RNA sequence: GGGAACGACUCGAGUAGAGUCGAAAAAGGAGAUCGAGCAGAUUCAUGAUCAGGCGCUCCCCAGCCCCAUGCCAAUUCCGGCCAGGAUCACCUCUCUGGCGUAGGGCUGCUGGCCGUUUUCAUGGCGCAAUGACACCCCAUUCGUGGGGUGUCAUUGAAAAGAAACAACAACAACAAC
Reactivity to DMS in 0.01 (KOAc 150mM, MgCl2 10mM, bicine 150mM(pH8.5), 24C), signal-to-noise 3, nucleotides 027 to 126: a130g000g000a030g010a080u000c070g010a100g010c050a110g000a070u010u010c160a120u020g000a060u000c030a100g010g000c020g030c040u010c010c020c030c000a100g000c030c010c000c070a060u020g000c030c020a050a100u010u010c040c000g000g000c010c040a040g010g000a060u010c060a090c040c020u000c070u020c130u000g010g030c020g040u040a030g000g000g000c110u020g000c030u000g000g020c000c000g000u000u010u020u010c130a090u020g010g000c070g030
Reactivity to 2A3 in 0.01 (KOAc 150mM, MgCl2 10mM, bicine 150mM(pH8.5), 24C), signal-to-noise 6, nucleotides 027 to 126: a000g100g010a060g010a080u160c110g010a020g030c030a020g040a060u080u090c040a050u230g120a060u060c030a020g060g000c010g000c030u020c000c010c000c010a050g010c000c020c000c010a070u110g000c000c020a040a040u130u050c050c020g030g010c020c020a030g050g040a090u060c060a160c090c010u060c020u040c060u130g100g000c060g070u100a030g020g000g000c030u060g020c000u000g030g000c000c000g010u040u050u040u020c110a120u070g010g010c030g000
Description
Structure probing data (DMS and 2A3) for a 177-nucleotide construct. For 2A3, 4,896 sequencing reads were counted. 2A3 adducts were read by reverse transcription with SuperScript II with manganese. Reactivities are rounded to 0.1 and cut off at 0 and 3. The RNA was probed in 150 mM KOAc, 10 mM MgCl2 and 150 mM bicine (pH 8.5) at 24 C.